The data come from the RNA Mapping Database (RMDB), library M2RFOK.
Structure probing data (2A3 and DMS) for a 207-nucleotide construct.
Values cover nucleotides 27 to 156.
For 2A3 the reverse transcriptase was SuperScript II with manganese.
[RMDB]
RNA sequence: GGGAACGACUCGAGUAGAGUCGAAAAACAUGCUGGCCAACCCAACCCCACGAUCCUCCAUCGGCAUGAUCAUGAUGUGUUCUCAAAUAUCAGGUCAGUAAAUCACCAUGCUCGUGCUGGUAAAGGCAACUUAUGCCCAAGUUCGCUUGGGCAUAAAUAGAAGAGUAGUAUUCGUACUACUCUUCUAAAAAGAAACAACAACAACAAC
Reactivity to 2A3 in 0.01 (KOAc 150mM, MgCl2 10mM, bicine 150mM(pH8.5), 24C), signal-to-noise 6, nucleotides 027 to 156: a000c050a020u080g000c010u020g010g000c010c010a040a030c040c010c030a020a060c020c010c020c020a050c080g070a140u050c010c020u040c040c020a040u050c010g010g010c000a010u010g000a000u000c010a010u010g050a040u090g040u000g030u100u010c070u020c050a080a120a020u230a110u130c070a040g000g050u020c010a010g010u040a030a090a040u100c020a020c020c000a010u010g000c000u010c000g010u010g000c010u010g010g010u030a120a110a010g030g000c020a040a030c060u020u010a000u000g000c000c000c000a010a000g020u040u080c120g020c130u000u010g030g000g000c000a000u000a000a000a000
Reactivity to DMS in 0.01 (KOAc 150mM, MgCl2 10mM, bicine 150mM(pH8.5), 24C), signal-to-noise 4, nucleotides 027 to 156: a080c060a090u000g010c000u000g020g010c010c020a140a160c080c010c040a090a120c040c000c020c020a090c130g000a130u000c010c010u020c030c040a030u000c020g000g010c000a010u000g000a020u000c010a040u000g000a020u000g010u000g000u000u000c040u000c060a090a100a150u000a120u000c110a110g020g020u000c030a050g020u010a030a070a100u000c010a010c010c000a040u000g000c100u000c000g030u000g000c000u010g020g040u000a020a040a040g010g000c090a060a080c110u000u000a000u000g030c000c000c010a000a050g010u000u010c300g010c020u010u010g010g000g010c000a000u000a000a010a110